Structure probing data (DMS) for a 177-nucleotide construct. The DMS profile rests on 930 reads.
RNA sequence: GGGAACGACUCGAGUAGAGUCGAAAAUAACACCACUUAUAGCAUCUCUGUUUACCUUCUGAACAGUAUAAUUAUUAGCAUCCUUCAAUGUUAGUCUGCUUUAUUAUUGGUAUAGGUAUUGGCACUGUAAACACAUGAGCUUCGGCUCAUGUGUUUAAAAAGAAACAACAACAACAAC
Reactivity to DMS in 0.01 (KOAc 150mM, MgCl2 10mM, bicine 150mM(pH8.5), 24C), signal-to-noise 1, nucleotides 027 to 126: u000a060a140c100a120c030c030a050c100u000u000a040u000a070g030c030a030u010c100u010c010u020g000u000u000u000a100c080c080u000u000c100u000g010a050a040c050a010g000u000a070u010a080a050u000u000a090u010u000a070g030c000a110u000c050c040u000u000c090a020a040u020g000u000u000a030g000u000c070u000g000c010u000u010u000a010u020u010a140u000u000g020g000u000a040u000a030g000g030u000a030u010u000g000g000c070a030c100u000g000

The data come from the RNA Mapping Database (RMDB), library OK2TRN. The reactions ran in a buffer of 150 mM KOAc, 10 mM MgCl2 and 150 mM bicine (pH 8.5), at 24 C. For DMS the reverse transcriptase was MarathonRT.